[RMDB]
RNA sequence: GGGAACGACUCGAGUAGAGUCGAAAAUGUUUGCAAUUCGUUGCAAACAAACUACCGAGAACGUUGCUGGGUAUAAACAGCGAACCCUUGGAAACAAGGGAACUAUGGAACGCUUCGGCGUUCCAAAGGAAUAGUAUCACUUCGGUGAUACUAUUCCAAAAGAAACAACAACAACAAC
Reactivity to 2A3 in 0.01 (KOAc 150mM, MgCl2 10mM, bicine 150mM(pH8.5), 24C), signal-to-noise 3, nucleotides 027 to 126: u020g000u000u000u000g000c020a020a010u020u040c180g050u090u020g020c000a010a010a010c010a010a050a020c010u020a020c000c020g010a020g030a180a110c050g040u070u130g010c020u030g000g040g050u300a100u140a260a210a010c020a000g000c020g030a090a110c000c010c000u010u010g000g000a040a010a020c000a010a010g000g020g020a000a000c020u030a090u090g010g000a000a000c000g000c000u030u050c170g100g010c000g000u000u000c000c000a000a020a000
Reactivity to DMS in 0.01 (KOAc 150mM, MgCl2 10mM, bicine 150mM(pH8.5), 24C), signal-to-noise 3, nucleotides 027 to 126: u000g000u000u000u000g000c000a000a030u010u000c210g040u000u010g000c010a010a000a000c000a020a090a060c060u000a110c000c000g010a040g000a090a080c060g020u000u000g010c000u000g010g010g010u030a110u000a090a110a150c050a030g000c060g010a080a210c010c010c010u000u000g000g000a170a110a110c010a010a000g000g000g010a030a070c080u010a120u010g000g000a010a000c010g020c000u010u030c180g040g000c000g010u000u000c000c000a000a010a040